[RMDB]
RNA sequence: GGGAACGACUCGAGUAGAGUCGAAAACAUCAGCAAAAACACCAAUGACGCUAGCUGAUAUAUCCAUAACGUUAAAAAACACAUUACCGAAACCGCCAGCGUCUUUUGCCGCAUCAAUUAAAGCUUGAGAUAUACCGAUAAUAGCAGGUGCUAGCUCCUCAACGACUAAGUUCGCUUAGUCGUUGAGAAAAGAAACAACAACAACAAC
Reactivity to DMS in 0.01 (KOAc 150mM, MgCl2 10mM, bicine 150mM(pH8.5), 24C), signal-to-noise 1, nucleotides 027 to 156: c080a080u010c040a050g000c030a030a070a060a050a060c040a070c060c050a100a190u010g030a060c040g030c030u000a050g000c030u000g000a040u000a040u000a130u010c020c030a150u000a020a080c030g000u000u000a000a070a060a080a020a100c070a070c020a080u010u000a140c070c070g000a010a110a020c090c060g000c030c010a080g030c080g010u000c020u000u000u000u000g030c020c050g000c060a090u010c030a080a100u010u000a090a090a090g000c000u000u000g010a060g030a010u000a100u000a070c000c010g000a070u000a070a120u000a090g030c050a070g030g000u000g000c010u000a110g030c030u030c030
Reactivity to 2A3 in 0.01 (KOAc 150mM, MgCl2 10mM, bicine 150mM(pH8.5), 24C), signal-to-noise 4, nucleotides 027 to 156: c030a030u040c020a000g000c010a050a030a030a030a070c060a060c060c050a080a100u100g020a020c020g000c030u020a020g000c020u030g020a010u030a000u020a010u130c070c060a070u110a170a060c070g060u060u080a100a100a030a000a130a010c100a020c020a110u110u150a090c030c070g060a080a040a020c010c040g030c050c050a010g000c000g000u000c000u010u070u020u050g030c010c030g000c010a040u020c030a060a150u140u120a120a060a020g040c040u060u070g080a020g020a070u100a030u070a140c040c020g030a040u060a180a040u060a140g050c060a020g040g000u030g000c020u010a010g020c010u050c010
Source: RMDB library OK3TST, as collected in RNAgym.
Chemical mapping of a 207-nucleotide RNA with DMS and 2A3.
Values cover nucleotides 27 to 156.
The reactions ran in a buffer of 150 mM KOAc, 10 mM MgCl2 and 150 mM bicine (pH 8.5), at 24 C.